[RMDB]
RNA sequence: GGGAACGACUCGAGUAGAGUCGAAAAGAUGAGGUUAAGAACUAGAGAGAACUGGAGACGCGUGAUGAAGCUCAAGAGAAAACGCGAGACUGAGCAAGUGUGCUAGACGAAGCACACAAGAGGAAGAAGUAAUACCUGAGUUCGCUCAGGUAUUACUAAAAGAAACAACAACAACAAC
Reactivity to 2A3 in 0.01 (KOAc 150mM, MgCl2 10mM, bicine 150mM(pH8.5), 24C), signal-to-noise 4, nucleotides 027 to 126: g070a100u160g020a010g080g010u110u120a080a050g070a110a040c050u070a060g000a010g010a010g010a140a050c040u080g030g000a040g000a020c020g000c020g050u100g020a080u080g030a030a020g000c020u010c030a040a040g040a010g010a070a060a010a020c030g000c020g030a030g020a020c030u050g000a010g030c060a090a120g010u000g000u010g000c010u010a010g030a080c050g130a140a000g020c000a000c000a010c000a000a000g080a010g090g010a030a080g030a030
Reactivity to DMS in 0.01 (KOAc 150mM, MgCl2 10mM, bicine 150mM(pH8.5), 24C), signal-to-noise 5, nucleotides 027 to 126: g000a080u010g000a070g000g000u000u020a100a030g000a090a070c070u000a070g000a100g000a080g030a030a130c080u020g010g000a070g010a070c070g020c040g040u000g000a070u020g000a070a050g000c020u000c030a060a120g000a080g020a080a050a070a060c100g010c100g010a060g000a080c030u020g020a060g020c070a070a110g020u000g010u000g000c000u000a110g020a180c280g000a080a030g000c000a000c000a000c010a060a050g010a120g020g000a090a080g000a100
The data come from the RNA Mapping Database (RMDB), library OK1LIB. An RNA of 177 nucleotides, treated with 2A3 and DMS and read out base by base. For DMS the reverse transcriptase was MarathonRT. Conditions: 150 mM KOAc, 10 mM MgCl2 and 150 mM bicine (pH 8.5), 24 C. The 2A3 profile rests on 4,789 reads. Values are in units of 0.01, from 0 to 300, in steps of 10. For 2A3 the reverse transcriptase was SuperScript II with manganese.